Chemical mapping of a 177-nucleotide RNA with 2A3 and DMS. Values cover nucleotides 27 to 126. For 2A3, 2,641 sequencing reads were counted. DMS (dimethyl sulfate) methylates the pairing face of unpaired adenines and cytosines. For DMS, 1,184 sequencing reads were counted. 2A3 adducts were read by reverse transcription with SuperScript II with manganese. For DMS the reverse transcriptase was MarathonRT. The reactions ran in a buffer of 150 mM KOAc, 10 mM MgCl2 and 150 mM bicine (pH 8.5), at 24 C.
RNA sequence: GGGAACGACUCGAGUAGAGUCGAAAAGAUAUGGACUAACAAGCUCGACGAUCGUCACAUCGGAAACGAUGUAAGACGGGAGAGUGUUAGUCCUAAGUCAAAAGGCCACAGCUUCGGCUGUGGCCAAGUAGGCAUACACGUUCGCGUGUAUGCCUACAAAAGAAACAACAACAACAAC
Reactivity to 2A3 in 0.01 (KOAc 150mM, MgCl2 10mM, bicine 150mM(pH8.5), 24C), signal-to-noise 2, nucleotides 027 to 126: g010a000u010a000u040g000g010a010c000u000a020a000c030a170a090g300c010u050c020g300a300c000g000a140u020c000g000u000c020a000c010a010u010c040g020g000a000a010a000c000g000a000u000g010u060a070a140g010a000c010g030g000g000a040g000a000g010u180g000u000u010a000g000u050c000c000u010a010a000g000u000c000a000a030a100a240g030g000c010c000a000c000a030g000c020u130u230c300g190g000c030u000g000u010g080g030c010c020a010a000
Reactivity to DMS in 0.01 (KOAc 150mM, MgCl2 10mM, bicine 150mM(pH8.5), 24C), signal-to-noise 1, nucleotides 027 to 126: g010a080u000a000u010g000g000a050c000u000a020a010c020a060a190g060c000u000c010g000a160c270g010a010u000c000g020u000c010a130c000a010u000c000g010g010a030a000a030c000g000a040u000g020u000a070a240g000a020c000g000g000g000a020g000a050g020u020g000u000u010a000g000u000c000c000u000a000a070g000u010c000a080a090a120a140g010g050c000c000a010c000a000g020c010u000u000c250g050g000c000u000g050u000g000g030c000c000a000a020